[RMDB]
RNA sequence: GGGAACGACUCGAGUAGAGUCGAAAAGAUAUGGAUGGUGGAACUACUGCGACAAUACUUGAUCGAAGAACUAAAUCGGAAACGAUUUAGGGAGAUCACGUAUUGUCGCAGCCACCAUCCUAAGUCAUCAUACCAUCAACUUCGGUUGAUGGUAUGAAAAAGAAACAACAACAACAAC
Reactivity to DMS in 0.01 (KOAc 150mM, MgCl2 10mM, bicine 150mM(pH8.5), 24C), signal-to-noise 3, nucleotides 027 to 126: g000a080u020a300u000g000g000a000u000g010g020u000g030g000a070a010c050u030a300c030u000g000c000g010a020c000a000a010u000a010c000u000u010g000a010u000c010g000a110a180g000a150a190c000u010a000a020a000u000c000g010g000a130a130a230c000g020a010u000u000u000a010g000g000g000a070g000a010u000c000a020c070g000u000a000u000u000g000u000c000g010c000a010g000c000c000a000c000c000a010u000c000c000u000a010a040g010u000c060a190
Reactivity to 2A3 in 0.01 (KOAc 150mM, MgCl2 10mM, bicine 150mM(pH8.5), 24C), signal-to-noise 1, nucleotides 027 to 126: g050a030u080a050u210g000g000a000u000g020g000u050g020g000a090a020c190u300a060c000u300g000c000g000a000c000a000a000u010a010c020u000u040g010a020u010c000g280a300a060g020a060a010c010u010a000a010a000u020c010g030g060a070a070a080c030g010a000u010u000u000a010g000g000g010a040g000a000u010c000a000c020g000u000a000u000u010g010u010c000g000c000a000g000c000c000a000c000c000a000u000c000c000u010a020a000g020u000c000a030
Notes:
Chemical mapping of a 177-nucleotide RNA with DMS and 2A3. For 2A3, 6,398 sequencing reads were counted. Conditions: 150 mM KOAc, 10 mM MgCl2 and 150 mM bicine (pH 8.5), 24 C. Values are in units of 0.01, from 0 to 300, in steps of 10. For 2A3 the reverse transcriptase was SuperScript II with manganese. Reactivities are given for positions 27 through 126.